This 207-nucleotide RNA was probed chemically with DMS and 2A3. For 2A3 the reverse transcriptase was SuperScript II with manganese. The RNA was probed in 150 mM KOAc, 10 mM MgCl2 and 150 mM bicine (pH 8.5) at 24 C. The DMS profile rests on 5,171 reads. For 2A3, 4,326 sequencing reads were counted.

[RMDB]
RNA sequence: GGGAACGACUCGAGUAGAGUCGAAAAGCAAGAUGGAGGUUUGCAUCAGAACAAGCUGUAUUAGCAGCAGUGGGUUCUGAUCCUACUGGUCGUUUUGAUAAAGCACAUCAACUUCCUACAAACGUAUUAGUUCUUCAUGCAGUAACAGUUAAUGAUAGGAAUUUGGAUAAUUCGUUAUCCAAAUUCCAAAAGAAACAACAACAACAAC
Reactivity to DMS in 0.01 (KOAc 150mM, MgCl2 10mM, bicine 150mM(pH8.5), 24C), signal-to-noise 3, nucleotides 027 to 156: g020c060a060a110g000a060u010g020g000a110g000g000u010u000u010g020c080a060u000c040a040g010a050a040c030a060a230g030c000u010g010u010a180u000u010a190g010c120a240g020c010a050g020u010g010g020g010u000u000c010u000g010a020u010c070c030u000a030c010u010g020g010u000c010g030u000u010u000u000g010a120u000a070a090a100g020c080a110c080a060u000c070a050a080c050u000u000c060c030u000a160c080a030a080a090c070g010u010a090u000u010a090g020u000u000c010u000u000c060a120u010g000c030a060g010u000a050a070c070a100g030u000u000a040a080u020g000a110u000a240
Reactivity to 2A3 in 0.01 (KOAc 150mM, MgCl2 10mM, bicine 150mM(pH8.5), 24C), signal-to-noise 6, nucleotides 027 to 156: g030c030a010a030g020a020u040g020g030a030g050g020u020u060u080g040c040a020u000c010a000g000a010a010c030a070a080g000c010u020g030u110a200u220u220a140g050c070a010g000c000a000g020u070g060g230g000u030u010c010u050g010a010u000c010c000u050a040c030u050g060g050u040c020g020u010u030u050u040g040a050u100a060a120a020g060c060a050c020a130u090c030a030a080c030u050u040c010c010u060a060c070a050a110a010c060g030u070a070u090u090a080g020u050u000c020u070u050c030a050u090g050c040a010g050u120a080a060c010a020g070u170u200a130a020u270g100a060u210a050